[RMDB]
RNA sequence: GGGAACGACUCGAGUAGAGUCGAAAAAGAUCGAGCUGGGCAAGUCCAAGGCGUUCUUCGCCGGCGCGGCAGGCCUCGUCACGGCCCUCAGCGUGUGGCUGACCGGCGAGCCCCUGGCUGAUGGCGCUGACAUAGAGCCUUUCGAGGCUCUAUGUCAAAAAGAAACAACAACAACAAC
Reactivity to 2A3 in 0.01 (KOAc 150mM, MgCl2 10mM, bicine 150mM(pH8.5), 24C), signal-to-noise 1, nucleotides 027 to 126: a000g070a040u160c050g020a030g060c030u080g010g080g040c100a120a040g030u100c050c020a080a140g110g020c000g020u120u050c130u170u070c030g000c030c080g010g000c080g000c020g040g060c030a010g040g000c020c000u030c060g140u090c030a050c070g000g000c020c010c010u030c010a080g030c060g030u130g030u080g060g000c000u010g010a020c030c000g000g000c010g000a010g020c000c000c000c020u050g130g000c000u000g030a070u070g070g050c040g040c050
Reactivity to DMS in 0.01 (KOAc 150mM, MgCl2 10mM, bicine 150mM(pH8.5), 24C), signal-to-noise 2, nucleotides 027 to 126: a050g000a080u000c050g010a130g010c030u010g000g000g010c090a060a080g010u000c030c050a110a130g020g020c030g000u020u000c120u030u000c050g010c020c000g010g000c070g020c050g020g000c100a090g010g000c180c020u000c180g020u000c050a080c190g000g000c020c020c060u010c110a050g030c020g020u010g020u000g000g020c010u020g000a110c050c030g000g000c000g000a090g020c030c040c030c080u000g000g000c020u010g010a030u000g010g010c060g010c160

An RNA of 177 nucleotides, treated with 2A3 and DMS and read out base by base. The RNA was probed in 150 mM KOAc, 10 mM MgCl2 and 150 mM bicine (pH 8.5) at 24 C. For 2A3 the reverse transcriptase was SuperScript II with manganese. DMS adducts were read by reverse transcription with MarathonRT.